[RMDB]
RNA sequence: GGGAACGACUCGAGUAGAGUCGAAAAGAUAUGGACCAAGCAACAGCUCCGGAUCGGAAACGAUCCAGGAGACAUGCUUGCGUCCUAAGUCAAAAGAACUAUUCUGACUUCGGUCAGAAUAGUUCAACUUUUUUCAUGACUUCGGUCAUGAAAAAAGAAAAGAAACAACAACAACAAC
Reactivity to DMS in 0.01 (KOAc 150mM, MgCl2 10mM, bicine 150mM(pH8.5), 24C), signal-to-noise 1, nucleotides 027 to 126: g000a020u000a300u000g010g000a020c010c000a000a000g000c010a060a060c300a170g010c020u000c020c000g020g010a020u020c000g000g000a120a080a100c010g020a020u000c000c000a040g020g000a000g000a100c040a100u020g000c000u020u000g000c230g000u000c000c010u000a000a070g000u000c060a070a090a120a080g000a000a000c000u000a010u000u000c010u000g010a010c020u000u010c220g020g000u000c000a000g000a010a000u000a010g010u000u000c000a060a050

Structure probing data (DMS) for a 177-nucleotide construct. The data come from the RNA Mapping Database (RMDB), library TTRDEL. For DMS the reverse transcriptase was MarathonRT. Reactivities are given for positions 27 through 126. The reactions ran in a buffer of 150 mM KOAc, 10 mM MgCl2 and 150 mM bicine (pH 8.5), at 24 C.